[RMDB]
RNA sequence: GGGAACGACUCGAGUAGAGUCGAAAAUGAUGAAGAGACAUGACGGUAUCAGUAUACAAAUCAAGGAUAUGAAUAAUGUUCCACUUAAAUCGUUUCAUGUCAUAGAUUUAAGCGAACUAUAUAUUGCGAUCAAUCGUUACUUCGGUAACGAUUGAUCAAAAGAAACAACAACAACAAC
Reactivity to DMS in 0.01 (KOAc 150mM, MgCl2 10mM, bicine 150mM(pH8.5), 24C), signal-to-noise 2, nucleotides 027 to 126: u000g020a080u020g000a130a090g010a090g000a010c000a000u000g000a050c030g030g020u010a110u000c040a050g010u010a120u000a060c110a090a090a040u000c080a080a130g000g020a080u000a010u000g000a180a090u040a090a080u020g010u020u010c060c090a150c010u000u000a000a050a030u000c010g000u010u000u000c070a060u000g000u010c040a130u010a080g000a020u000u000u000a010a010g020c300g010a030a020c000u000a300u010a080u000a070u000u000g000c280
Reactivity to 2A3 in 0.01 (KOAc 150mM, MgCl2 10mM, bicine 150mM(pH8.5), 24C), signal-to-noise 2, nucleotides 027 to 126: u090g040a000u020g030a060a090g030a000g030a030c010a010u030g030a010c030g050g030u140a000u060c020a030g060u050a090u050a180c100a060a120a050u120c080a110a040g190g000a020u030a020u120g100a050a050u250a130a080u110g020u000u000c040c000a030c020u010u010a020a000a040u020c050g070u050u090u010c050a070u060g030u000c000a000u110a050g010a020u020u030u050a020a000g020c020g010a000a000c030u000a020u010a010u000a020u270u100g030c050
The record gives the reactivity of an RNA of 177 nucleotides to DMS and 2A3. The 2A3 profile rests on 1,354 reads. Reactivities are given for positions 27 through 126. DMS adducts were read by reverse transcription with MarathonRT. The RNA was probed in 150 mM KOAc, 10 mM MgCl2 and 150 mM bicine (pH 8.5) at 24 C.